Structure probing data (2A3 and DMS) for a 177-nucleotide construct. The 2A3 profile rests on 1,542 reads. Conditions: 150 mM KOAc, 10 mM MgCl2 and 150 mM bicine (pH 8.5), 24 C.
RNA sequence: GGGAACGACUCGAGUAGAGUCGAAAAAAUUUAGAUUAUCCAGGUGUAGCGGUGAAAUUCGUAGAGAUCUGGUGGAUAAUGAACCGGUGGCGAAGGCGAAAGAAAACCGCUGAAAUGCUGAAGUGAAACUUGAAUACGAUUUCGAUCGUAUUCAAGUAAAAGAAACAACAACAACAAC
Reactivity to 2A3 in 0.01 (KOAc 150mM, MgCl2 10mM, bicine 150mM(pH8.5), 24C), signal-to-noise 2, nucleotides 027 to 126: a030a030u210u230u100a070g020a050u050u050a050u120c020c010a030g050g010u060g030u040a010g030c010g040g040u000g060a050a040a130u050u040c000g010u010a030g000a010g000a210u040c030u080g000g060u020g050g060a090u130a250a150u200g020a030a030c010c030g050g030u020g040g050c040g070a040a040g080g040c020g030a030a000a000g080a030a050a000a000c000c000g000c020u000g030a010a010a020u150g000c020u020g020a070a090g090u120g120a080a090
Reactivity to DMS in 0.01 (KOAc 150mM, MgCl2 10mM, bicine 150mM(pH8.5), 24C), signal-to-noise 5, nucleotides 027 to 126: a050a050u010u000u010a090g010a130u000u000a080u010c010c020a090g000g010u000g020u000a040g020c000g000g000u000g000a070a140a110u000u000c020g020u010a150g020a110g000a110u000c010u010g010g000u000g000g020a130u000a090a080u000g010a140a040c030c010g010g010u000g010g010c300g020a090a130g010g000c020g010a030a030a080g010a090a070a210a060c020c030g020c000u000g000a050a080a110u000g000c020u000g010a100a100g020u000g010a080a080